[RMDB]
RNA sequence: GGGAACGACUCGAGUAGAGUCGAAAAGCAAACUAUGUUUUCAUCGUAGUACCAUGAUAUGUUGAAAAUAUCCGGCAUUCUUCCUCUCAUCAAAGAUAUUCGAGGAUUGUCAAGUGGGGGCCAUCAGGAGGUUGAAGUAGUUCGCUACUUCAACCUCAAAAGAAACAACAACAACAAC
Reactivity to DMS in 0.01 (KOAc 150mM, MgCl2 10mM, bicine 150mM(pH8.5), 24C), signal-to-noise 1, nucleotides 027 to 126: g060c150a080a150a070c050u010a060u000g000u010u000u000u010c090a030u000c030g000u000a020g020u000a080c120c070a090u000g000a060u000a030u000g000u000u010g000a020a090a050a040u000a040u000c140c080g020g000c040a040u000u000c050u000u000c000c010u000c050u010c110a040u010c170a040a100a150g010a040u010a030u000u000c160g000a060g000g000a100u000u000g000u000c020a060a120g000u000g030g000g010g010g010c050c090a030u030c090a050g030
An RNA of 177 nucleotides, treated with DMS and read out base by base.
For DMS the reverse transcriptase was MarathonRT.
It was measured as part of the RMDB library OK2TRN.
Values are in units of 0.01, from 0 to 300, in steps of 10.
For DMS, 924 sequencing reads were counted.
Conditions: 150 mM KOAc, 10 mM MgCl2 and 150 mM bicine (pH 8.5), 24 C.